The record gives the reactivity of an RNA of 207 nucleotides to DMS and 2A3. For DMS, 3,833 sequencing reads were counted. DMS adducts were read by reverse transcription with MarathonRT. For 2A3, 4,571 sequencing reads were counted.
[RMDB]
RNA sequence: GGGAACGACUCGAGUAGAGUCGAAAAGCAGUAUUCGUACUGCAAUCUUCCUAAGUCGUCAGGCCGAGACACUGAGUGCUUGGACCAUGUUCGGAAACGAACAUGCUAGCACUCAGUGUUAUCCUGACGAUAUGGACUUCACGUGGUUCGCCACGAAAUGCCAAGGGUUAUUCGUAACCCUUGGCAUAAAAGAAACAACAACAACAAC
Reactivity to DMS in 0.01 (KOAc 150mM, MgCl2 10mM, bicine 150mM(pH8.5), 24C), signal-to-noise 2, nucleotides 027 to 156: g020c000a020g040u000a050u010u000c300g040u000a010c000u000g000c010a060a030u000c070u000u010c000c000u000a110a300g010u000c000g040u000c000a020g010g000c230c090g010a300g000a040c010a000c000u000g000a010g020u000g000c000u000u010g020g020a110c300c010a000u010g030u000u000c000g050g000a190a060a300c010g020a010a000c000a010u010g000c000u000a010g020c010a000c000u000c000a010g000u000g010u010u000a040u020c020c000u000g000a010c000g020a010u000a040u000g010g000a120c070u010u010c050a200c030g040u000g020g020u000u000c150g050c020c000a050c010g000a030a060
Reactivity to 2A3 in 0.01 (KOAc 150mM, MgCl2 10mM, bicine 150mM(pH8.5), 24C), signal-to-noise 5, nucleotides 027 to 156: g000c000a010g000u070a020u080u200c280g070u070a070c000u000g010c000a010a100u070c040u040u040c010c000u050a140a060g020u000c000g000u000c000a000g010g020c040c120g280a160g000a170c000a000c010u000g000a000g000u000g040c010u120u200g050g040a070c130c000a000u000g000u000u000c020g020g020a090a100a090c010g000a000a000c000a000u000g010c000u000a000g000c010a000c000u000c000a010g000u000g000u000u000a000u000c000c000u000g000a000c000g000a000u000a000u020g030g020a020c050u160u090c210a050c140g010u020g000g040u100u060c210g060c090c000a010c000g060a070a200